[RMDB]
RNA sequence: GGGAACGACUCGAGUAGAGUCGAAAAACCUAGCGAAUCGCCGUAGUGCAGCGUGUUCGUCCGCGUCGCUGCGGUUAAAUCAAAUGACUGAACUAAACAUGUAGAACUAGUCGUGGAGCGCUUCUGGACGCGGGUUCGAUUCCCGCCGCCUCCACCAGCUAUAAGCUGUGUUCGCACAGCUUAUAGCAAAAGAAACAACAACAACAAC
Reactivity to 2A3 in 0.01 (KOAc 150mM, MgCl2 10mM, bicine 150mM(pH8.5), 24C), signal-to-noise 4, nucleotides 027 to 156: a000c020c000u040a050g050c020g140a110a100u170c060g000c000c000g010u000a000g000u000g030c050a000g010c020g000u020g030u030u030c030g010u010c000c010g010c000g070u060c000g000c000u010g010c000g000g000u020u070a050a050a000u160c130a000a010a040u110g020a020c040u110g010a040a020c020u060a110a140a040c070a150u200g080u210a070g040a110a060c090u050a060g120u110c050g000u030g000g000a020g000c130g000c060u230u120c090u180g080g030a080c050g000c010g000g000g020u060u050c040g020a000u070u080c000c000c000g000c000c020g020c010c010u000c000c000a000c010c010a020
Reactivity to DMS in 0.01 (KOAc 150mM, MgCl2 10mM, bicine 150mM(pH8.5), 24C), signal-to-noise 1, nucleotides 027 to 156: a100c040c010u000a010g000c040g000a120a070u000c060g000c040c030g070u030a030g080u000g060c110a090g010c000g000u010g050u000u000c090g010u000c070c040g010c010g000u000c080g000c020u000g000c000g020g000u000u000a070a100a120u000c030a100a090a120u000g000a150c060u000g000a080a200c030u000a120a080a120c050a090u010g020u000a120g000a190a120c040u010a040g000u000c060g000u000g000g000a070g030c150g030c070u000u010c120u000g000g010a120c070g010c040g030g000g020u000u010c100g020a300u000u000c000c000c000g000c000c010g000c000c000u000c000c010a070c020c020a080